[RMDB]
RNA sequence: GGGAACGACUCGAGUAGAGUCGAAAAGAGUGGUCAAAAUUUCGAGAUGUUGGCAGAAAAAUCCGUGCAUUUGUCGAAUACCAUCAAGGAUUUUCUAAAGAGGGUCAGUUUGUGCGAGAGCCGUGUACCUCAUACACCAGUUCGCUGGUGUAUGAGGAAAAGAAACAACAACAACAAC
Reactivity to 2A3 in 0.01 (KOAc 150mM, MgCl2 10mM, bicine 150mM(pH8.5), 24C), signal-to-noise 1, nucleotides 027 to 126: g040a010g010u050g000g030u060c060a100a070a100a150u050u080u030c040g000a000g000a130u040g020u140u130g010g000c090a090g140a060a100a010a000a010u020c040c020g010u060g000c030a070u020u020u090g080u020c020g050a010a000u040a150c030c020a040u120c020a020a020g020g000a070u010u110u030u000c020u090a050a070a010g070a070g050g030g000u000c040a060g010u000u160u110g060u020g030c010g010a110g010a010g120c000c030g020u060g020u040a100
Reactivity to DMS in 0.01 (KOAc 150mM, MgCl2 10mM, bicine 150mM(pH8.5), 24C), signal-to-noise 3, nucleotides 027 to 126: g000a100g020u010g010g020u010c080a050a050a100a110u010u010u000c050g000a150g000a050u000g010u000u000g010g020c120a090g010a010a060a080a100a030u000c020c050g010u000g010c080a060u000u010u010g020u000c070g010a050a110u000a070c090c040a070u000c070a050a150g000g020a070u000u000u000u000c060u010a040a080a090g010a080g000g010g000u000c050a060g000u000u000u010g030u000g000c060g010a150g010a070g030c010c040g010u000g000u010a180